An RNA of 177 nucleotides, treated with DMS and 2A3 and read out base by base.
The 2A3 profile rests on 1,094 reads.
The RNA was probed in 150 mM KOAc, 10 mM MgCl2 and 150 mM bicine (pH 8.5) at 24 C.
For DMS the reverse transcriptase was MarathonRT.
The DMS profile rests on 2,029 reads.
RNA sequence: GGGAACGACUCGAGUAGAGUCGAAAAGAGCAGGUGUGCGUGUGAAAGAGGAGAGGGGUUGGGAAAGAGAGCGGUUUACGAACCAAUGCCGCGGGUGUUGUAGCGUUGAAGUAACACCAUAUAUCAAGAGUACUCAUUACUUCGGUAAUGAGUACUCAAAAGAAACAACAACAACAAC
Reactivity to DMS in 0.01 (KOAc 150mM, MgCl2 10mM, bicine 150mM(pH8.5), 24C), signal-to-noise 3, nucleotides 027 to 126: g020a110g010c080a090g030g020u010g020u000g010c060g050u010g020u010g010a080a080a070g010a140g020g000a100g010a140g030g010g000g010u020u000g030g010g010a030a080a100g010a110g010a100g010c030g020g010u000u000u000a060c130g010a100a110c100c110a070a060u000g000c030c020g030c000g030g000g010u010g010u000u010g000u000a110g010c130g000u000u010g000a070a160g000u000a020a040c030a050c020c010a070u000a110u020a120u000c180a060a190
Reactivity to 2A3 in 0.01 (KOAc 150mM, MgCl2 10mM, bicine 150mM(pH8.5), 24C), signal-to-noise 1, nucleotides 027 to 126: g090a000g040c090a040g030g020u030g000u090g070c100g020u140g000u020g060a210a060a040g060a020g030g070a120g040a050g010g010g000g000u110u090g040g020g040a060a180a000g150a010g000a010g000c050g010g000u070u030u080a070c080g030a010a050c030c020a090a090u060g020c010c040g020c000g020g030g000u090g050u050u040g020u020a060g040c090g110u040u070g050a060a010g000u080a050a020c010a020c030c030a060u100a000u010a010u120c060a080a040